This 177-nucleotide RNA was probed chemically with 2A3 and DMS. The reactions ran in a buffer of 150 mM KOAc, 10 mM MgCl2 and 150 mM bicine (pH 8.5), at 24 C.

[RMDB]
RNA sequence: GGGAACGACUCGAGUAGAGUCGAAAACGUCCUAGUUUCGACUAGGACGAAAUAAAAUCAGCGGUAAAUAUUCGAGGCGUAUUACCGCUGAACGCCUCGAUAAAAUGCGAUGAUUCGUCAUCGCAAACACAGAGUCUAAGUUCGCUUAGACUCUGUGAAAAGAAACAACAACAACAAC
Reactivity to 2A3 in 0.01 (KOAc 150mM, MgCl2 10mM, bicine 150mM(pH8.5), 24C), signal-to-noise 4, nucleotides 027 to 126: c010g020u010c000c000u000a010g000u010u050u070c220g070a010c010u010a020g010g020a010c000g000a010a000a000u110a000a050a010a070u020c000a000g010c000g110g080u100a080a120a030u150a160u140u170c060g020a020g040g010c030g000u000a040u020u090a060c010c010g000c000u000g000a000a000c000g010c000c000u000c010g000a010u130a110a130a030a040u070g010c010g000a000u010g000a010u030u050c170g060u010c060a000u010c010g000c000a000a020a000
Reactivity to DMS in 0.01 (KOAc 150mM, MgCl2 10mM, bicine 150mM(pH8.5), 24C), signal-to-noise 3, nucleotides 027 to 126: c020g000u000c000c000u000a010g000u010u000u020c170g010a010c010u000a010g000g010a000c010g010a000a060a050u000a040a060a130a070u000c020a010g020c010g000g000u000a040a070a050u000a090u000u010c060g010a020g000g020c020g000u000a060u000u000a090c020c020g000c000u000g010a020a010c040g020c010c000u000c040g000a100u020a060a050a080a090u010g010c000g000a000u000g010a030u000u010c230g000u000c000a010u000c000g010c020a010a040a160